[RMDB]
RNA sequence: GGGAACGACUCGAGUAGAGUCGAAAAGAAAGGCGCGCCUGACAUCUAAAUGGAGUUGCCGCGAGAAACUCUUAGGAAAUAAAACUGGGAGGUUUAUUUAAAUCGCGGUCCGCCUGUAGGCAAGAAAGGGUUAUCAUAUCUUCGGAUAUGAUAACCCAAAAGAAACAACAACAACAAC
Reactivity to DMS in 0.01 (KOAc 150mM, MgCl2 10mM, bicine 150mM(pH8.5), 24C), signal-to-noise 2, nucleotides 027 to 126: g020a050a070a030g000g000c010g030c180g000c070c000u010g020a050c130a050u000c050u030a070a110a100u050g010g000a260g020u010u010g000c010c010g000c020g010a040g000a100a100a090c010u000c000u010u000a000g000g000a120a060a130u030a070a030a130a020c000u020g010g010g000a000g000g000u000u020u010a020u050u040u020a060a050a120u010c000g000c000g020g000u030c170c060g000c000c000u020g000u000a040g020g020c040a110a060g000a090a080a060
Reactivity to 2A3 in 0.01 (KOAc 150mM, MgCl2 10mM, bicine 150mM(pH8.5), 24C), signal-to-noise 2, nucleotides 027 to 126: g120a020a120a000g010g060c000g000c000g020c060c000u030g040a050c030a150u160c020u060a000a170a080u140g000g000a150g050u130u220g050c010c000g000c000g000a030g020a040a030a010c000u000c000u060u000a000g080g030a150a090a000u240a100a180a120a080c000u000g000g000g000a000g060g020u000u080u000a010u010u210u040a000a060a020u000c000g000c000g000g020u030c000c000g040c010c000u020g000u050a080g000g010c000a040a000g040a010a100a020